[RMDB]
RNA sequence: GGGAACGACUCGAGUAGAGUCGAAAAACAUGAGUUCGCUCAUGUAAAAAAGCGUACUACGAAAGACAUGCUCGAAGGUGGGAGUCCCAAAUAGGACAUCGAUCACUGUAUGAGCAACAGCUUUCGUAUCGCAAAAAGGGAGCCUUCGGGCUCCCAACAUCAUAGUACGAUUCGUCGUACUAUGAUGAAAAGAAACAACAACAACAAC
Reactivity to DMS in 0.01 (KOAc 150mM, MgCl2 10mM, bicine 150mM(pH8.5), 24C), signal-to-noise 3, nucleotides 027 to 156: a060c010a010u000g010a020g030u010u010c300g070c050u000c010a030u040g030u000a000a050a070a110a090a120g000c040g030u010a070c210u000a030c010g000a020a030a030g000a060c060a300u000g000c000u020c000g000a090a270g000g030u010g010g010g000a100g030u010c010c000c010a080a140a160u010a070g010g010a030c000a150u000c060g010a080u000c000a000c000u000g020u000a160u010g020a010g020c050a020a100c060a110g000c000u000u030u000c010g000u000a020u000c010g000c030a010a070a120a140a070g000g020g010a030g000c000c020u000u000c210g040g000g010c000u000c000c000c000a000a050
Reactivity to 2A3 in 0.01 (KOAc 150mM, MgCl2 10mM, bicine 150mM(pH8.5), 24C), signal-to-noise 5, nucleotides 027 to 156: a010c010a000u010g000a010g040u130u150c200g090c050u000c010a010u020g010u120a060a080a020a000a040a020g030c020g020u050a100c080u000a000c000g020a000a000a000g030a040c040a110u070g000c000u020c010g080a100a010g000g000u010g000g030g000a040g000u010c020c020c030a150a210a080u270a060g000g010a010c030a190u150c110g110a080u130c010a020c080u300g040u070a060u300g010a000g000c000a010a020c000a010g020c000u000u030u000c000g000u010a020u190c010g000c030a030a100a000a000a040g020g000g000a020g000c010c000u050u090c240g140g030g000c000u000c000c000c000a000a000